[RMDB]
This 177-nucleotide RNA was probed chemically with 2A3 and DMS. Conditions: 150 mM KOAc, 10 mM MgCl2 and 150 mM bicine (pH 8.5), 24 C. Reactivities are given for positions 27 through 126. The data come from the RNA Mapping Database (RMDB), library TTRINS.

RNA sequence: GGGAACGACUCGAGUAGAGUCGAAAAGAUAUGGAAUUCAUGUACCGAGCUUGGAUUUAUAUGGAUAACACAUCGGAAACGAUGUGCUAAUACAUAUUGUCAGCUCCGUACAUGAAUUCCUAAGUCACUCAUUCGUUAACUUCGGUUAACGAAUGAGAAAAGAAACAACAACAACAAC
Reactivity to 2A3 in 0.01 (KOAc 150mM, MgCl2 10mM, bicine 150mM(pH8.5), 24C), signal-to-noise 1, nucleotides 027 to 126: g020a070u140a040u100g000g000a010a040u020u000c000a000u050g000u000a020c000c030g000a000g020c030u230u300g250g010a070u260u300u140a050u070a010u000g020g030a030u010a070a020c050a000c000a010u010c000g050g100a090a030a150c040g030a000u000g020u000g040c010u000a040a000u270a080c000a000u050a020u020u010g000u080c000a000g040c030u000c000c000g000u000a000c000a020u030g000a000a010u000u000c000c010u030a000a000g010u040c000a030
Reactivity to DMS in 0.01 (KOAc 150mM, MgCl2 10mM, bicine 150mM(pH8.5), 24C), signal-to-noise 1, nucleotides 027 to 126: g000a090u010a300u010g020g000a020a000u020u000c000a030u000g010u000a000c000c300g010a010g010c010u000u020g010g010a010u000u010u000a030u000a030u010g000g010a120u000a090a140c000a010c000a010u000c000g010g000a110a100a270c010g010a000u000g020u000g000c040u000a060a110u000a120c000a000u000a000u000u000g010u000c010a000g000c010u000c000c300g050u000a010c000a010u000g000a000a000u000u000c000c000u000a000a040g000u000c050a220